About this RNA:
Conditions: 150 mM KOAc, 10 mM MgCl2 and 150 mM bicine (pH 8.5), 24 C. The record gives the reactivity of an RNA of 177 nucleotides to DMS and 2A3. The DMS profile rests on 1,907 reads. In probing experiments dimethyl sulfate is read out at A N1 and C N3, which are open when not base-paired. It was measured as part of the RMDB library RFM100.
RNA sequence: GGGAACGACUCGAGUAGAGUCGAAAACACUUCGGGUGCGGCCACGGCAUAAGUUCCUUGGAACAGGACGUCAUAGAGGGUGAGAAUCCCGUCUUUGGCUGCUGGACCGCGCCCAUGCGAAGUUCCUAAUAACCUUGCACUUCGGUGCAAGGUUAUUAAAAGAAACAACAACAACAAC
Reactivity to DMS in 0.01 (KOAc 150mM, MgCl2 10mM, bicine 150mM(pH8.5), 24C), signal-to-noise 1, nucleotides 027 to 126: c270a050c000u000u000c090g000g000g000u000g000c000g000g010c010c010a020c020g000g000c000a040u010a030a180g000u100u070c000c000u000u000g000g070a110a140c030a010g000g000a060c040g020u000c000a020u000a020g060a210g020g040g000u000g000a300g000a220a220u030c010c010c000g000u000c010u000u000u000g000g010c000u000g040c020u000g000g000a040c000c010g000c020g000c000c000c020a010u010g060c110g000a010a090g010u000u000c000c030u000
Reactivity to 2A3 in 0.01 (KOAc 150mM, MgCl2 10mM, bicine 150mM(pH8.5), 24C), signal-to-noise 3, nucleotides 027 to 126: c060a020c020u040u000c040g000g000g000u020g020c010g000g000c020c040a240c090g020g000c010a040u070a190a030g050u110u050c000c000u060u100g130g040a050a020c000a030g000g020a000c010g000u030c020a010u030a010g010a000g020g030g020u030g000a040g000a010a060u040c000c040c020g280u030c000u040u000u010g030g020c010u050g030c010u010g020g060a100c010c000g000c000g000c000c000c000a000u010g000c050g020a030a000g040u080u050c000c000u020